[RMDB]
The data come from the RNA Mapping Database (RMDB), libraries RFM100 and RFMREP. Structure probing data (2A3 and DMS) for a 177-nucleotide construct. The 2A3 profile rests on 1,876 reads. For 2A3 the reverse transcriptase was SuperScript II with manganese. The reactions ran in a buffer of 150 mM KOAc, 10 mM MgCl2 and 150 mM bicine (pH 8.5), at 24 C. Values are in units of 0.01, from 0 to 300, in steps of 10.

RNA sequence: GGGAACGACUCGAGUAGAGUCGAAAAAGCCAUGUACGCAUGGCAACGCCGUCUAAGUGAAUGCUUUGCCACAGUCUUCGAUGUUCUGAAAUGAAGCCUGGGCUCAGAUUCGCUUAGGCCGGAGUAAUCAUUGAGUCCCUUUCGAGGGACUCAAUGAAAAAGAAACAACAACAACAAC
Reactivity to 2A3 in 0.01 (KOAc 150mM, MgCl2 10mM, bicine 150mM(pH8.5), 24C), signal-to-noise 4, nucleotides 027 to 126: a000g000c010c000a000u000g010u010a020c240g000c080a000u000g000g000c030a020a060c050g050c000c010g020u000c000u000a010a000g000u020g030a000a000u170g270c010u050u000u020g010c000c000a190c010a120g020u000c000u000u010c000g110a100u130g150u270u230c120u250g130a160a200a140u160g010a000a010g000c000c000u010g000g000g000c000u000c000a000g000a000u000u020c000g030c000u000u000a000g000g000c000c060g000g000a040g000u090a050a100
Reactivity to DMS in 0.01 (KOAc 150mM, MgCl2 10mM, bicine 150mM(pH8.5), 24C), signal-to-noise 2, nucleotides 027 to 126: a130g000c000c000a000u010g000u000a110c230g030c020a000u000g020g000c000a070a020c060g020c000c020g030u000c000u020a010a010g000u000g000a020a030u040g010c010u000u000u000g000c020c000a060c000a000g030u000c000u000u000c000g030a140u010g000u060u030c190u050g020a080a120a120u000g010a000a010g000c030c010u000g000g000g000c010u000c100a010g000a060u010u000c000g010c000u000u000a020g000g000c040c080g020g000a050g000u000a080a100